[RMDB]
RNA sequence: GGGAACGACUCGAGUAGAGUCGAAAAAAAAUGGGUUACCACGGGUGAAAUCUAUUGUAGAAGGGCAACCUUAUGCAGUAGUAAAGUAGUCCCUCUGGUCCAUUGUAAUGUCGACCAAGAACAGUUUAUGUAGAAACAUGUUCGCAUGUUUCUACAUAAAAGAAACAACAACAACAAC
Reactivity to 2A3 in 0.01 (KOAc 150mM, MgCl2 10mM, bicine 150mM(pH8.5), 24C), signal-to-noise 2, nucleotides 027 to 126: a000a000a000a000u020g000g000g010u070u180a000c000c000a000c040g010g000g000u030g010a010a000a010u020c000u000a000u000u000g010u000a020g010a050a010g020g000g010c050a080a080c000c000u010u000a040u030g000c000a020g010u030a010g070u210a000a000a000g000u000a000g000u010c000c000c000u000c000u010g000g000u000c000c000a010u000u000g040u060a090a030u060g060u100c060g020a080c020c040a040a040g080a090a100c070a080g010u000u000u000
Reactivity to DMS in 0.01 (KOAc 150mM, MgCl2 10mM, bicine 150mM(pH8.5), 24C), signal-to-noise 2, nucleotides 027 to 126: a080a030a000a000u000g010g000g000u020u040a070c000c000a000c200g000g000g000u000g000a100a110a080u000c000u000a010u010u000g010u000a030g000a020a020g000g010g050c300a110a100c010c020u000u010a060u010g000c010a010g030u000a000g000u100a000a000a060g000u000a160g000u000c000c000c010u000c010u000g010g000u000c000c010a000u000u000g000u010a050a070u010g020u030c090g000a220c010c010a100a080g000a090a080c150a080g000u010u000u000